[RMDB]
Source: RMDB library POS240, as collected in RNAgym. This 307-nucleotide RNA was probed chemically with DMS and 2A3. For 2A3, 134,236 sequencing reads were counted. For DMS, 211,446 sequencing reads were counted.
RNA sequence: GGGAACGACUCGAGUAGAGUCGAAAAGUAGUCUGUGUCGUACACCGAGCCUGUACGACCCUACUCGUAGUACUGUAUGUGUGCUACGCGUGAGGUAAGGAUGUGACUGAUUCUUACGCAUGCGUAGGUUUCCAGUCUAAAUCUACAAGUUUAUAUCAGUCACAUAUGAACGCAUGCCAAUAGGUAGACUGGACUUAUUGCUCACGGGAGCUCAGGCUCGGUGAGCUUCAGUAGGACCGGUACACAUACAGUACCGGUACAGACUAGGAGCUCAGUUCGCUGAGUUCAAAAGAAACAACAACAACAAC
Reactivity to DMS in 0.01 (KOAc 150mM, MgCl2 10mM, bicine 150mM(pH8.5), 24C), signal-to-noise 9, nucleotides 027 to 266: g010u000a010g010u000c010u000g010u000g010u000c010g010u000a020c030a020c060c040g000a090g010c090c110u000g000u000a010c000g000a010c010c010c010u000a000c000u000c010g010u000a010g010u000a010c010u000g010u010a080u020g010u010g010u000g000c000u000a010c000g010c020g020u000g000a020g010g010u010a060a110g010g010a030u000g010u000g000a030c030u000g000a020u000u000c100u010u010a050c120g010c080a020u000g010c180g010u000a020g000g010u000u000u000c020c010a020g000u000c020u000a020a040a040u010c030u000a040c070a090a180g000u010u010u010a050u010a040u010c030a030g000u000c040a020c040a030u000a030u010g010a120a050c060g010c110a040u000g010c100c050a030a040u000a020g000g010u000a020g000a020c020u000g000g000a050c020u000u000a010u000u000g000c010u000c020a010c010g010g010g000a020g000c000u000c010a030g010g000c030u000c040g000g010u000g000a000g000c000u000u000c000a020g010u000a020g010g000a020c010c000g000g000u000a000c000a050c140a100u010a060c150a110g010u000a000c000c000g000g000u000a000c000a010g000a020c000u000a040g000
Reactivity to 2A3 in 0.01 (KOAc 150mM, MgCl2 10mM, bicine 150mM(pH8.5), 24C), signal-to-noise 9, nucleotides 027 to 266: g110u030a000g000u000c000u000g010u000g000u010c010g010u010a000c020a010c030c090g050a030g050c010c020u010g000u010a000c000g010a010c000c000c000u010a010c000u010c010g010u010a020g000u010a010c050u100g170u300a140u160g190u060g000u010g020c000u000a000c000g010c000g010u000g010a010g000g050u040a030a020g110g030a020u020g020u030g040a020c020u020g010a020u090u040c040u090u100a050c080g040c050a040u080g050c050g040u010a020g020g020u010u050u010c010c000a000g000u000c010u030a030a050a060u030c010u030a030c030a130a090g020u030u150u100a170u030a010u060c020a010g050u050c020a020c010a040u070a050u070g060a040a010c040g010c070a020u070g040c020c010a040a050u030a030g020g020u010a020g010a030c010u020g010g000a000c000u010u010a010u010u060g020c000u000c000a000c000g010g010g000a000g000c000u000c010a020g050g030c030u040c050g000g010u010g000a000g000c000u000u010c000a010g010u020a000g000g020a000c010c000g000g000u010a000c060a000c000a030u150a110c030a040g000u000a000c000c000g000g000u000a000c000a000g000a000c000u010a030g070
The RNA was probed in 150 mM KOAc, 10 mM MgCl2 and 150 mM bicine (pH 8.5) at 24 C.